RNA sequence: GGGAACGACUCGAGUAGAGUCGAAAAACAGAAAAAAGGAGUUUAAAUUAGAUUUGCAGACGGACGGUACUAAAUACCGUCACUUUUACGUCUAACUUAUCGUUAACUCUGCAAAAAGAAAACAAGAAAAACAAGCGUGAGUUCGCUCACGCUUGAACAAUCUAGAUAGCUUCGGCUAUCUAGAUUGAAAAGAAACAACAACAACAAC
Reactivity to 2A3 in 0.01 (KOAc 150mM, MgCl2 10mM, bicine 150mM(pH8.5), 24C), signal-to-noise 3, nucleotides 027 to 156: a000c030a030g120a070a120a010a010a020a050g060g010a020g010u120u150u170a100a150a120u120u100a050g030a020u000u010u040g030c050a000g000a010c010g050g000a010c010g020g000u010a040c060u240a110a080a040u060a010c000c000g000u000c000a010c000u010u040u020u120a030c000g000u000c010u020a080a070c010u020u010a000u020c000g010u010u020a010a010c010u010c000u010g000c030a040a080a000a050a030g080a040a050a010a040c070a050a070g120a110a130a020a020a000c010a000a010g000c000g000u000g010a020g010u020u110c170g030c120u000c010a010c010g000c000u000u000g000a000a000
Reactivity to DMS in 0.01 (KOAc 150mM, MgCl2 10mM, bicine 150mM(pH8.5), 24C), signal-to-noise 2, nucleotides 027 to 156: a150c060a130g010a000a050a050a060a150a240g000g000a010g030u020u000u000a050a030a030u000u000a050g020a050u000u010u000g040c050a000g040a010c020g010g030a000c000g020g030u010a010c020u000a070a030a300u010a000c020c000g020u000c000a000c020u000u000u010u000a100c000g000u000c000u000a010a030c040u010u010a010u000c050g020u000u000a000a030c010u000c000u010g010c090a030a090a070a130a140g010a050a070a050a090c010a050a100g010a030a080a080a050a150c000a000a050g000c000g050u000g000a030g020u000u010c300g010c000u010c010a010c000g000c000u000u000g000a000a050

This 207-nucleotide RNA was probed chemically with 2A3 and DMS. The RNA was probed in 150 mM KOAc, 10 mM MgCl2 and 150 mM bicine (pH 8.5) at 24 C. It was measured as part of the RMDB library M2RFOK. Reactivities are rounded to 0.1 and cut off at 0 and 3. The 2A3 profile rests on 3,213 reads. Reactivities are given for positions 27 through 156.